RNA sequence: GGGAACGACUCGAGUAGAGUCGAAAAGAUAUGGAGUUGUCACCCAACAGCUAUAUGGUCGGAAACGACCACAUAGACAUGGCAAGUCAACUCCUAAGUCAAACUGAAAGGGUUCGCCCUUUCAGAACAACUCUAUCGUGUUCGCACGAUAGAGUUGAAAAGAAACAACAACAACAAC
Reactivity to 2A3 in 0.01 (KOAc 150mM, MgCl2 10mM, bicine 150mM(pH8.5), 24C), signal-to-noise 3, nucleotides 027 to 126: g030a020u060a040u130g010g000a020g000u000u020g040u030c050a120c040c010c040a090a040c060a100g030c010u010a010u010a010u030g020g010u010c020g040g000a030a020a070c000g010a020c000c030a000c000a000u020a000g040a030c100a240u170g010g030c060a070a300g020u010c020a010a000c000u000c000c010u010a070a010g000u010c100a080a040a110c000u010g020a000a010a010g110g020g010u090u220c270g210c010c010c040u000u000u000c000a010g010a030a020
Reactivity to DMS in 0.01 (KOAc 150mM, MgCl2 10mM, bicine 150mM(pH8.5), 24C), signal-to-noise 3, nucleotides 027 to 126: g010a040u000a260u020g000g000a020g010u000u010g000u000c040a200c250c020c070a080a060c170a140g010c000u010a000u010a030u000g000g000u000c000g000g000a040a050a110c010g010a000c000c000a000c020a000u010a020g010a070c090a140u000g000g000c120a150a110g000u000c010a000a010c000u000c000c000u000a020a070g000u000c000a100a100a260c010u000g000a020a010a010g000g010g010u000u010c280g000c020c000c000u010u000u000c000a010g000a060a190

This 177-nucleotide RNA was probed chemically with 2A3 and DMS.
For 2A3, 4,715 sequencing reads were counted.
DMS adducts were read by reverse transcription with MarathonRT.
Reactivities are given for positions 27 through 126.
Reactivities are rounded to 0.1 and cut off at 0 and 3.
Conditions: 150 mM KOAc, 10 mM MgCl2 and 150 mM bicine (pH 8.5), 24 C.
It was measured as part of the RMDB library TTRDEL.
2A3 adducts were read by reverse transcription with SuperScript II with manganese.